The data come from the RNA Mapping Database (RMDB), library OK2TRN.
Structure probing data (DMS and 2A3) for a 177-nucleotide construct.
For DMS the reverse transcriptase was MarathonRT.
Reactivities are given for positions 27 through 126.
Reactivities are rounded to 0.1 and cut off at 0 and 3.

RNA sequence: GGGAACGACUCGAGUAGAGUCGAAAAGUGGCAAAGCUAACCUCUUAAACCCUGUUUGUCCAGUCAUAGUUAGCAGAGCACCAUCUAUGGAAAAAAUAAGAUUAACAGCCUUGAGAUAUAUGAACCCUAAUCAUGUAACAUUCGUGUUACAUGAUUAAAAAGAAACAACAACAACAAC
Reactivity to DMS in 0.01 (KOAc 150mM, MgCl2 10mM, bicine 150mM(pH8.5), 24C), signal-to-noise 8, nucleotides 027 to 126: g030u000g000g010c040a050a140a150g010c060u000a060a090c040c070u000c050u010u010a080a120a150c050c050c010u000g010u000u010u010g010u000c030c030a070g000u000c050a050u010a050g010u000u000a050g020c050a050g010a300g010c060a070c040c040a030u000c060u000a060u000g010g010a000a020a090a060a060a080u010a050a070g000a110u000u000a060a080c080a080g010c070c040u000u000g010a090g010a090u010a060u000a060u010g010a080a100c020c010c030
Reactivity to 2A3 in 0.01 (KOAc 150mM, MgCl2 10mM, bicine 150mM(pH8.5), 24C), signal-to-noise 5, nucleotides 027 to 126: g060u060g030g020c060a040a050a060g020c030u030a020a050c010c020u010c040u070u140a090a120a110c020c010c000u010g070u060u110u090g080u030c030c010a020g010u030c020a050u030a120g030u020u050a020g040c030a020g020a010g040c020a020c020c010a020u020c020u050a090u080g060g000a040a060a030a030a020a040u170a080a060g030a090u070u100a040a040c010a030g030c000c010u040u060g090a060g020a030u060a000u020a030u120g040a040a060c000c000c000